[RMDB]
RNA sequence: GGGAACGACUCGAGUAGAGUCGAAAAACACCCUGAUUCGUCAGGGUGUAAAAACCGUAGGCUUGGUGUAGGGAGAUCAUGGGUUCGAAAGAGCCCAUGGAUCAUCGAUCUACACACAAGCCUAAACGGAAAAAAGCAUGUUGUUCGCAACAUGCAAUCUACAAAGGAGAUUCGUCUCCUUUGUAGAAAAAGAAACAACAACAACAAC
Reactivity to DMS in 0.01 (KOAc 150mM, MgCl2 10mM, bicine 150mM(pH8.5), 24C), signal-to-noise 2, nucleotides 027 to 156: a050c000a020c000c000c000u000g000a020u000u010c300g010u000c010a020g020g010g020u000g010u010a020a030a050a070a080c010c010g020u000a040g000g000c010u010u010g000g010u000g000u000a000g010g000g000a260g010a020u000c000a030u000g010g010g020u000u000c000g010a150a130a300g020a020g010c000c010c030a000u000g020g030a030u000c060a160u010c120g000a140u000c000u000a010c000a020c010a060c010a030a020g050c000c000u000a000a000a030c020g000g010a000a060a090a090a100a150g040c020a010u000g010u000u000g010u000u000c210g030c010a050a010c000a020u010g000c000a020a020
Reactivity to 2A3 in 0.01 (KOAc 150mM, MgCl2 10mM, bicine 150mM(pH8.5), 24C), signal-to-noise 1, nucleotides 027 to 156: a000c000a000c000c000c000u000g010a040u010u090c170g070u010c110a000g000g000g000u000g010u010a000a000a000a000a000c000c010g000u010a010g010g020c010u010u000g000g000u000g010u010a020g050g030g010a030g000a010u010c000a000u010g000g000g010u000u000c000g000a070a060a070g010a030g020c000c000c010a000u010g000g050a020u030c000a010u160c010g040a020u040c010u000a020c000a000c000a010c000a000a000g060c000c000u000a000a000a000c020g030g010a120a080a000a000a000a030g030c000a000u030g000u000u020g030u070u180c300g000c130a000a020c000a000u000g000c000a000a050
Structure probing data (DMS and 2A3) for a 207-nucleotide construct. The RNA was probed in 150 mM KOAc, 10 mM MgCl2 and 150 mM bicine (pH 8.5) at 24 C. The DMS profile rests on 3,844 reads. For 2A3 the reverse transcriptase was SuperScript II with manganese. For DMS the reverse transcriptase was MarathonRT. For 2A3, 2,012 sequencing reads were counted.